About this RNA
An RNA of 207 nucleotides, treated with 2A3 and read out base by base. 2A3 adducts were read by reverse transcription with SuperScript II with manganese. High 2A3 reactivity points to a flexible backbone, as in loops and unpaired stretches. For 2A3, 1,209 sequencing reads were counted.
RNA sequence: GGGAACGACUCGAGUAGAGUCGAAAAGUACAUCCCCUGAUCAAGGAUGCCCGAAACGGUGAGGCGGAAAGCAAAUUAAAUAACGUCAACCCAUCGGGACGGUUGGCCAGUUAAGAAGUGAGGAUUCAAAAGAUCGAACCGUUCGCGGUUCGAUCAAUCUGGUUUACGAGUUCGCUCGUAAACCAGAAAAAGAAACAACAACAACAAC
Reactivity to 2A3 in 0.01 (KOAc 150mM, MgCl2 10mM, bicine 150mM(pH8.5), 24C), signal-to-noise 2, nucleotides 027 to 156: g060u030a020c020a060u030c010c010c000c000u060g020a050u070c040a040a000g090g020a030u090g050c020c020c010g060a130a080a030c100g010g020u050g010a140g010g010c020g040g000a140a010a000g090c160a140a040a110u180u220a150a090a080u120a150a010c000g000u000c000a010a010c010c000c070a040u020c020g010g010g020a030c020g010g030u010u020g030g000c000c000a020g020u010u090a140a100g040a060a020g030u030g000a030g030g120a080u080u040c080a030a060a110a050g000a000u010c010g000a000a000c000c000g010u020u050c090g030c030g030g000u000u020c000g000a000u010c000a000a000